Description: An RNA of 177 nucleotides, treated with DMS and 2A3 and read out base by base. For DMS the reverse transcriptase was MarathonRT. Conditions: 150 mM KOAc, 10 mM MgCl2 and 150 mM bicine (pH 8.5), 24 C. For 2A3 the reverse transcriptase was SuperScript II with manganese.
RNA sequence: GGGAACGACUCGAGUAGAGUCGAAAAAUGGUCUACUUCCAGCAGUUUAGAAGUAUCUAUGAAGCGGUUGCACACAUCAUGGAUUACAUACACUUUUACAACAACGAGCGGCUGCACUCUGGACUGCGAGAGUGUCACUUUUCGAAGUGACACUCUCAAAAGAAACAACAACAACAAC
Reactivity to DMS in 0.01 (KOAc 150mM, MgCl2 10mM, bicine 150mM(pH8.5), 24C), signal-to-noise 1, nucleotides 027 to 126: a150u010g010g000u000c080u000a070c100u010u000c060c040a070g000c050a040g030u000u010u010a040g010a090a060g010u000a060u000c050u020a000u010g000a020a080g010c020g000g030u000u010g030c120a120c040a090c080a030u000c060a040u020g000g000a010u010u030a050c060a090u000a010c100a120c020u000u000u000u000a110c130a100a030c150a030a070c130g010a080g000c050g000g020c080u000g000c100a120c100u010c040u000g010g020a080c120u000g010c120
Reactivity to 2A3 in 0.01 (KOAc 150mM, MgCl2 10mM, bicine 150mM(pH8.5), 24C), signal-to-noise 1, nucleotides 027 to 126: a000u100g020g030u000c030u000a050c090u100u030c000c070a020g000c010a010g000u000u000u160a050g050a120a010g010u050a020u000c030u040a040u080g000a000a010g030c040g030g120u080u070g080c100a050c010a030c020a100u090c000a050u010g040g000a080u130u140a030c000a030u170a040c040a040c120u080u200u120u140a100c090a180a000c000a000a000c080g090a000g050c040g020g030c030u060g020c030a010c020u000c020u000g040g000a020c000u010g010c120